[RMDB]
RNA sequence: GGGAACGACUCGAGUAGAGUCGAAAAUCUUAAGGCUUUGCAGAAGGCUGUUAAUAUAGCUAAAAACGCCUAUGAGAAGGAUAAGGCAGUGGCCCGUAAGUUAGAACGUAUGGCUGAUCAGGCUAUGGAGCGAACUAUAAUUCGUUAUAGUUCGCUCAAAAGAAACAACAACAACAAC
Reactivity to DMS in 0.01 (KOAc 150mM, MgCl2 10mM, bicine 150mM(pH8.5), 24C), signal-to-noise 4, nucleotides 027 to 126: u000c030u000u010a100a090g010g000c010u000u000u000g010c170a070g010a130a100g010g010c010u000g000u000u000a110a160u000a090u010a040g010c040u010a020a070a090a130a070c180g010c000c010u010a090u010g010a110g010a120a070g010g000a070u010a040a130g010g000c030a070g010u010g010g010c030c030c030g010u000a050a090g020u000u000a090g010a130a080c130g010u000a050u010g010g010c020u000g000a120u010c120a100g000g000c030u000a030u010g020
Reactivity to 2A3 in 0.01 (KOAc 150mM, MgCl2 10mM, bicine 150mM(pH8.5), 24C), signal-to-noise 2, nucleotides 027 to 126: u030c000u040u040a090a020g020g000c010u040u060u110g050c070a030g020a210a040g050g000c000u050g030u020u030a150a000u130a050u080a130g020c020u050a050a050a120a110a070c080g020c040c000u060a100u100g100a090g030a060a030g020g000a030u070a090a060g040g000c010a050g020u050g070g050c010c030c020g060u030a060a020g050u050u140a070g030a160a020c050g010u100a040u120g000g000c000u000g010a140u130c050a020g000g000c000u000a060u120g080
Chemical mapping of a 177-nucleotide RNA with DMS and 2A3. High DMS reactivity at an A or C suggests that its Watson-Crick edge is free. For 2A3 the reverse transcriptase was SuperScript II with manganese.